[RMDB]
RNA sequence: GGGAACGACUCGAGUAGAGUCGAAAAUCUGUAUAACCAGAUAGUCCCAACAGGCAGGGGGCCUCUUGUAGGAUAAGCCACUCUGUCCUCCUGCGGGUACUCACAUUGGGGUAAGGGUGGUCUGGGACACCCGUAAUUUGUUCGCAAAUUACGGGUGAAAAGAAACAACAACAACAAC
Reactivity to 2A3 in 0.01 (KOAc 150mM, MgCl2 10mM, bicine 150mM(pH8.5), 24C), signal-to-noise 4, nucleotides 027 to 126: u030c010u010g020u050a300u070a300a050c080c000a010g000a020u030a030g080u000c000c000c010a020a040c050a000g070g000c010a010g000g000g000g000g020c010c010u010c030u050u140g120u190a070g000g090a060u040a160a030g040c000c010a070c020u040c010u010g080u050c000c010u020c000c000u030g020c020g070g020g030u080a060c040u040c050a070c020a250u130u200g030g000g030g020u030a060a020g020g020g030u040g010g040u000c070u060g010g000g030a010
Reactivity to DMS in 0.01 (KOAc 150mM, MgCl2 10mM, bicine 150mM(pH8.5), 24C), signal-to-noise 6, nucleotides 027 to 126: u000c000u000g010u010a140u020a140a150c250c000a010g000a020u000a150g000u000c000c000c000a120a120c240a070g000g010c030a030g000g010g020g010g000c030c020u010c040u010u000g020u010a060g010g000a160u010a070a150g010c030c020a050c020u000c030u000g000u010c020c000u000c000c040u010g010c040g000g010g010u010a030c090u010c080a080c140a130u000u000g000g010g000g010u000a090a080g000g000g010u000g000g010u000c060u000g010g010g000a300

Description: The data come from the RNA Mapping Database (RMDB), library OK2TRN. Chemical mapping of a 177-nucleotide RNA with 2A3 and DMS. For 2A3, 5,075 sequencing reads were counted. Values cover nucleotides 27 to 126.